[RMDB]
Annotation: This 177-nucleotide RNA was probed chemically with 2A3 and DMS. DMS adducts were read by reverse transcription with MarathonRT. The RNA was probed in 150 mM KOAc, 10 mM MgCl2 and 150 mM bicine (pH 8.5) at 24 C. Reactivities are given for positions 27 through 126.
RNA sequence: GGGAACGACUCGAGUAGAGUCGAAAACACAGCGACGCUCGGAUGGCAAUCUUGUCGGCCCCGAGCAUCUUGAGCAACGGGUUGAAGACCGGUCCGAUGAACAUGGACUGCACGAUCUCGGCGGUCUUAACCACUUCUACUUCGGUAGAAGUGGUUAAAAAGAAACAACAACAACAAC
Reactivity to 2A3 in 0.01 (KOAc 150mM, MgCl2 10mM, bicine 150mM(pH8.5), 24C), signal-to-noise 2, nucleotides 027 to 126: c050a000c020a000g050c030g090a070c090g040c010u020c000g000g060a140u130g050g020c050a110a160u130c180u170u250g140u120c080g070g000c030c000c000c000g000a000g030c000a000u020c000u040u080g030a020g010c030a050a050c060g100g030g000u070u170g050a090a020g010a050c010c040g040g070u080c020c020g010a060u160g050a030a010c000a060u120g030g110a200c060u100g050c070a030c080g040a070u000c060u000c000g040g030c000g030g050u010c000u030
Reactivity to DMS in 0.01 (KOAc 150mM, MgCl2 10mM, bicine 150mM(pH8.5), 24C), signal-to-noise 2, nucleotides 027 to 126: c070a130c120a100g010c060g000a060c100g000c020u000c010g000g010a110u000g040g010c020a120a120u010c140u010u000g020u000c130g000g010c020c020c000c000g000a100g000c010a020u000c030u030u010g010a070g010c070a070a110c070g020g000g010u010u010g010a120a040g000a040c050c010g020g010u010c010c020g000a050u010g000a070a090c100a100u020g000g000a120c110u000g010c020a040c050g010a090u010c060u000c010g010g000c050g000g000u010c000u000